[RMDB]
An RNA of 177 nucleotides, treated with 2A3 and DMS and read out base by base.
RNA sequence: GGGAACGACUCGAGUAGAGUCGAAAAGGUGUGCUCAACGGAAUCGUGCACCCGCUGGUCGCCCGGCGCCGAUCCGAGAUCAUCGCGGCGGUUUCGGGGGACGCGGUUGUGGUCGAAGAUAUUCCACGUCAGUCGUAUAGUUCGCUAUACGACUGACAAAAGAAACAACAACAACAAC
Reactivity to 2A3 in 0.01 (KOAc 150mM, MgCl2 10mM, bicine 150mM(pH8.5), 24C), signal-to-noise 2, nucleotides 027 to 126: g090g000u070g040u020g090c020u030c070a040a050c080g020g060a030a060u040c040g000u070g050c010a030c010c000c010g040c060u140g180g030u000c020g300c090c000c000g000g000c000g000c000c010g010a100u080c030c020g000a040g000a170u250c130a040u150c120g030c040g040g030c010g000g000u030u020u020c000g000g000g000g010g010a000c010g000c000g050g000u020u100g020u060g020g080u060c030g000a030a010g010a100u140a110u080u050c010c010a030c040
Reactivity to DMS in 0.01 (KOAc 150mM, MgCl2 10mM, bicine 150mM(pH8.5), 24C), signal-to-noise 2, nucleotides 027 to 126: g010g010u000g000u010g020c060u010c070a110a120c110g030g000a060a070u000c090g020u000g020c030a040c060c010c010g020c010u010g040g020u010c020g010c030c020c030g040g000c100g000c010c000g000a090u020c080c000g030a090g000a140u010c270a140u010c030g020c040g020g020c010g010g000u000u000u010c020g000g000g010g000g020a030c010g000c020g000g010u010u000g040u000g020g010u000c040g020a110a090g000a130u000a100u000u000c010c000a160c240
The RNA was probed in 150 mM KOAc, 10 mM MgCl2 and 150 mM bicine (pH 8.5) at 24 C. For 2A3 the reverse transcriptase was SuperScript II with manganese. For 2A3, 2,343 sequencing reads were counted.